[RMDB]
RNA sequence: GGGAACGACUCGAGUAGAGUCGAAAAUUAGCCGGGCAUAGUGGAGUGCACUUGUAAUCCCAGCUACUUGGGAGGCUAAGCCAGGAGAAUCGCUUGAAUCCGGGAGGCAGAGGUUGCAGUGAGCCAAGAUCGCGCCACUGCCUUCCAGCCUGGGCGACCUACAUAGGAGUUUCGACUCCUAUGUAGGAAAAGAAACAACAACAACAAC
Reactivity to DMS in 0.01 (KOAc 150mM, MgCl2 10mM, bicine 150mM(pH8.5), 24C), signal-to-noise 1, nucleotides 027 to 156: u010u000a090g010c060c030g010g040g000c110a090u010a070g010u010g000g020a130g030u010g000c030a110c060u000u020g000u020a080a150u000c010c000c000a150g030c110u000a020c060u020u080g000g020g010a100g000g040c030u010a040a120g000c020c010a130g020g000a170g010a050a080u000c040g010c030u010u010g000a080a110u000c020c000g000g000g020a060g070g030c010a010g010a030g040g030u000u030g010c000a130g000u010g010a200g030c080c150a070a110g040a100u010c030g020c050g020c020c020a070c000u010g020c010c010u000u010c000c020a000g000c090c020u000g000g000g020c020g010a150
Reactivity to 2A3 in 0.01 (KOAc 150mM, MgCl2 10mM, bicine 150mM(pH8.5), 24C), signal-to-noise 3, nucleotides 027 to 156: u110u030a020g010c000c000g000g000g000c070a100u100a080g040u060g100g080a130g060u150g040c030a010c060u030u070g070u120a050a050u010c000c010c010a010g040c060u130a140c050u130u000g040g000g010a020g070g000c030u040a040a000g050c030c010a010g030g040a110g040a100a070u070c040g000c080u070u100g070a130a030u130c070c030g010g000g000a010g000g000c000a000g010a020g030g020u180u300g010c040a080g060u040g190a030g110c040c030a080a020g120a070u110c060g000c010g000c010c010a020c000u000g000c000c000u000u000c000c000a000g000c000c010u040g090g000g000c000g030a030